[RMDB]
RNA sequence: GGGAACGACUCGAGUAGAGUCGAAAAUCUGGAGUCAUCCGGCCCCAAAGGAGGAGAGUCCCGCCAGGGGUGAUCCACCCGGAGAUGAGCGGAGAAACCACAUCCAGAGGACCCCUUCGACGAACAGCACGAGUUUGGUUCGCCAAACUCAAAAGAAACAACAACAACAAC
Reactivity to DMS in 0.01 (KOAc 150mM, MgCl2 10mM, bicine 150mM(pH8.5), 24C), signal-to-noise 9, nucleotides 027 to 129: u030c020u020g030g000a040g050u000c090a100u030c010c010g000g080c050c000c010c020a040a130a080g020g010a080g010g010a050g010a170g050u020c020c030c030g090c170c140a180g090g030g000g010u000g030a100u000c010c040a030c080c030c000g010g010a200g060a060u050g030a100g040c050g000g000a080g020a080a110a120c090c130a100c050a190u030c040c030a000g010a070g040g020a180c060c000c020c050u000u000c060g040a090c080g020a070a010c110a090g050c130a050c150
Reactivity to 2A3 in 0.01 (KOAc 150mM, MgCl2 10mM, bicine 150mM(pH8.5), 24C), signal-to-noise 9, nucleotides 027 to 129: u010c000u000g010g010a000g060u040c030a100u010c050c030g250g030c070c000c000c010a050a080a010g030g000a020g010g010a020g000a000g050u020c000c000c000g090c110c100a070g000g000g000g000u010g010a010u000c010c010a050c050c010c010g030g010a060g010a100u120g030a030g070c020g010g020a040g060a090a100a030c060c030a040c040a180u000c010c000a010g010a010g020g030a040c000c000c010c000u070u150c060g090a110c030g030a140a050c030a070g090c080a030c140